[RMDB]
RNA sequence: GGGAACGACUCGAGUAGAGUCGAAAAGAAAGAAGUCACUUUUACGGUUGGCCAUUUGUCUCUUACGUUGCAUUUAUCAAUCUGCUUUUUGAUACAGCAGCACCUCGCUGCUGCUUUUUUAUUUGAAAGGUGUGAGUAAAUUCGUUUACUCACACCUAAAAGAAACAACAACAACAAC
Reactivity to 2A3 in 0.01 (KOAc 150mM, MgCl2 10mM, bicine 150mM(pH8.5), 24C), signal-to-noise 2, nucleotides 027 to 126: g060a000a140a000g050a060a030g050u070c030a020c000u100u140u100u140a050c030g120g050u110u160g080g020c040c020a100u070u010u100g100u030c030u000c010u100u050a050c170g080u050u050g000c010a100u020u060u130a110u090c020a000a050u050c080u090g140c100u080u070u060u130u110g110a080u030a040c000a010g040c010a000g030c010a090c030c180u140c100g000c020u000g050c010u010g000c020u010u010u050u000u000u000a160u080u030u020g090a090a050
Reactivity to DMS in 0.01 (KOAc 150mM, MgCl2 10mM, bicine 150mM(pH8.5), 24C), signal-to-noise 4, nucleotides 027 to 126: g000a070a090a070g010a090a060g010u010c060a060c060u000u010u050u030a070c150g000g000u000u010g030g020c040c040a110u000u000u000g020u020c000u000c040u020u030a080c120g030u010u000g000c050a050u010u000u010a040u010c010a000a040u010c130u000g000c150u010u000u000u010u030g010a070u010a080c100a030g000c000a010g020c010a090c130c200u030c140g010c030u000g000c010u000g000c010u000u000u000u010u030u020a100u020u020u020g000a090a110